An RNA of 177 nucleotides, treated with DMS and read out base by base.

RNA sequence: GGGAACGACUCGAGUAGAGUCGAAAAUACUAAGUGAAGAACUAAUCUAUCCCAGGUAUAGGCCACGACAGUUGGCGCCCAACGUGGGGCUCGAUUGAGUGAAAUUUAAAUUAAGCUGAGGAGAAUACUACAUAGCUGGGUUCGCCCAGCUAUGUAGAAAAGAAACAACAACAACAAC
Reactivity to DMS in 0.01 (KOAc 150mM, MgCl2 10mM, bicine 150mM(pH8.5), 24C), signal-to-noise 1, nucleotides 027 to 126: u000a080c120u000a120a070g010u000g010a170a070g010a130a040c030u010a060a050u000c000u010a110u000c000c000c000a210g000g010u000a060u000a080g000g020c020c000a000c020g000a130c130a050g000u000u010g010g020c080g000c060c050c080a110a140c150g000u000g000g020g000g010c040u010c100g050a030u000u010g000a070g000u000g000a090a150a120u010u000u000a030a050a130u000u010a060a140g000c020u000g000a120g010g000a090g000a080a080u000a170
The RNA was probed in 150 mM KOAc, 10 mM MgCl2 and 150 mM bicine (pH 8.5) at 24 C. DMS adducts were read by reverse transcription with MarathonRT.